RNA sequence: GGGAACGACUCGAGUAGAGUCGAAAAAUUCCUUUGAUGUUUCCCAGCCAGGGAUUUUCCUCCUCUAGUUUCUUGAGUUUCUUCUUGGUCUUCCGGAGGUCCCUCUCGAGCUCUUCCGCUUUCUUUCCACCGUCUGCCUUCGGGCAGACGAAAAGAAACAACAACAACAAC
Reactivity to DMS in 0.01 (KOAc 150mM, MgCl2 10mM, bicine 150mM(pH8.5), 24C), signal-to-noise 4, nucleotides 027 to 129: a090u010u000c000c000u050u030u000g000a110u020g020u000u000u000c000c110c060a230g020c080c080a090g030g010g100a150u000u000u000u000c040c000u000c040c090u000c010u010a080g010u010u010u050c040u020u030g020a110g030u010u000u020c030u050u010c050u060u050g000g000u040c070u000u040c000c000g020g030a100g050g080u020c040c020c010u020c020u070c000g000a100g040c090u020c050u030u020c050c010g020c000u010u040u010c090u040u020u010c060c020a070c040
Reactivity to 2A3 in 0.01 (KOAc 150mM, MgCl2 10mM, bicine 150mM(pH8.5), 24C), signal-to-noise 2, nucleotides 027 to 129: a000u070u030c060c000u100u030u080g060a050u030g030u000u040u000c000c000c000a000g050c040c020a020g000g070g000a060u060u040u020u000c000c000u000c010c020u040c020u030a090g040u000u060u020c010u000u090g030a010g010u000u020u010c000u020u010c020u050u080g070g000u000c020u060u020c030c010g010g000a020g000g020u020c000c000c000u000c000u020c000g050a000g000c020u000c000u030u000c000c010g060c040u000u040u000c000u030u040u000c020c020a040c000
An RNA of 170 nucleotides, treated with DMS and 2A3 and read out base by base. For 2A3 the reverse transcriptase was SuperScript II with manganese. Reactivities are given for positions 27 through 129.